Conditions: 150 mM KOAc, 10 mM MgCl2 and 150 mM bicine (pH 8.5), 24 C.
Structure probing data (DMS and 2A3) for a 177-nucleotide construct.

RNA sequence: GGGAACGACUCGAGUAGAGUCGAAAACAGGGUGCUCAAAGGAGCAUGAUCAAGUCUGUGGCGGCUGAUUUGGCGCUGGGCAAUCUGCUGGACGCUGACUCAUUCCAGGUUGACUCACCCGGCGCCGACCUCUGAUCCAAUUCGUUGGAUCAGAGGUAAAAGAAACAACAACAACAAC
Reactivity to DMS in 0.01 (KOAc 150mM, MgCl2 10mM, bicine 150mM(pH8.5), 24C), signal-to-noise 3, nucleotides 027 to 126: c080a160g000g010g040u020g010c040u010c010a120a120a130g020g010a020g010c040a040u000g010a070u000c080a050a060g020u000c030u010g000u010g010g010c030g020g010c040u010g000a090u000u000u000g020g040c000g020c000u010g010g010g030c080a050a090u000c000u000g010c060u000g000g000a060c300g010c120u010g010a080c120u020c060a130u000u000c060c000a030g010g000u020u000g000a060c080u010c220a210c030c010c010g000g010c030g030c000c010g000
Reactivity to 2A3 in 0.01 (KOAc 150mM, MgCl2 10mM, bicine 150mM(pH8.5), 24C), signal-to-noise 2, nucleotides 027 to 126: c030a030g100g020g040u030g000c010u040c050a250a290a160g300g020a060g010c010a020u060g020a040u100c050a080a000g110u010c040u120g080u100g060g040c040g000g000c040u060g050a110u190u030u180g010g000c020g000c010u000g000g030g000c000a010a000u060c010u070g000c040u040g000g000a040c090g100c200u140g050a170c010u060c160a070u190u080c000c000a010g060g000u050u040g010a020c020u050c120a050c000c000c020g000g000c020g030c030c000g010
Background
Reactivities are given for positions 27 through 126. 2A3 adducts were read by reverse transcription with SuperScript II with manganese. It was measured as part of the RMDB library OK2TRN.